[RMDB]
Structure probing data (2A3) for a 207-nucleotide construct. The reactions ran in a buffer of 150 mM KOAc, 10 mM MgCl2 and 150 mM bicine (pH 8.5), at 24 C. As a SHAPE reagent, 2A3 marks flexible, mostly unpaired nucleotides at the ribose 2'-OH.
RNA sequence: GGGAACGACUCGAGUAGAGUCGAAAAGAAAGAAAGAAGCGAGCUGGCGCAGCCGCACGGGCAACCGUCAAUCCAGCACUUCACAAGUCUUGUCGUUCUGACAGGACAUCCAUCAACCCGCCGGGAAAAAAGGACUACAGCUUCGGCUGUAGUCCAACACUAAUGGGUUCUUCGGAACCCAUUAGUGAAAAGAAACAACAACAACAAC
Reactivity to 2A3 in 0.01 (KOAc 150mM, MgCl2 10mM, bicine 150mM(pH8.5), 24C), signal-to-noise 1, nucleotides 027 to 156: g040a010a060a010g010a010a060a010g030a050a000g000c070g050a020g040c030u020g000g000c030g030c170a040g130c080c150g010c030a030c030g000g000g000c060a060a060c070c000g040u060c020a010a040u010c010c000a010g020c040a050c020u100u060c030a030c030a220a050g010u000c000u000u010g010u000c020g120u210u220c180u300g000a000c000a000g000g000a000c000a020u000c020c000a090u060c020a050a140c000c000c010g000c000c060g000g000g000a030a160a020a020a030a050g010g000a000c000u010a000c000a000g000c000u040u070c180g100g010c010u000g000u000a000g010u060c000c000a000a000